[RMDB]
RNA sequence: GGGAACGACUCGAGUAGAGUCGAAAAAUGUUCGUCUUCGACAACCUCGCCGACGUCGACGACCGCGGCAUCCAGGCGCUGCUCCGGGAAGUCUCCUCGGACGUACUGGUGCUGGCGCUCAAGGGCAGCCAGUAAAUAUGUUCGCAUAUUUACUGGCAAAAGAAACAACAACAACAAC
Reactivity to 2A3 in 0.01 (KOAc 150mM, MgCl2 10mM, bicine 150mM(pH8.5), 24C), signal-to-noise 8, nucleotides 027 to 126: a000u100g040u060u060c020g000u000c030u060u040c030g030a030c020a120a090c010c040u070c060g050c040c020g050a110c060g010u020c020g030a060c030g000a010c010c020g030c030g040g010c000a020u060c020c000a020g040g010c030g000c050u070g010c020u010c010c010g010g010g020a080a030g070u020c040u040c090c050u060c080g020g000a010c010g010u080a040c000u010g000g010u010g000c040u060g100g000c000g000c020u030c030a050a070g040g010g010c010a020
Reactivity to DMS in 0.01 (KOAc 150mM, MgCl2 10mM, bicine 150mM(pH8.5), 24C), signal-to-noise 9, nucleotides 027 to 126: a070u010g010u000u010c050g000u000c020u000u010c010g000a060c050a120a240c160c090u000c110g010c060c040g010a090c150g010u000c020g010a030c050g000a040c050c050g010c100g010g010c020a040u010c020c020a110g010g010c040g010c080u000g010c080u000c010c010g000g010g000a130a230g010u000c080u000c120c090u010c140g010g010a020c020g010u010a170c020u000g000g010u000g000c020u000g020g010c010g010c030u000c060a080a090g000g010g010c090a180
The record gives the reactivity of an RNA of 177 nucleotides to 2A3 and DMS.
The DMS profile rests on 17,464 reads.
For 2A3 the reverse transcriptase was SuperScript II with manganese.
The 2A3 profile rests on 24,789 reads.
For DMS the reverse transcriptase was MarathonRT.
It was measured as part of the RMDB library OK2TST.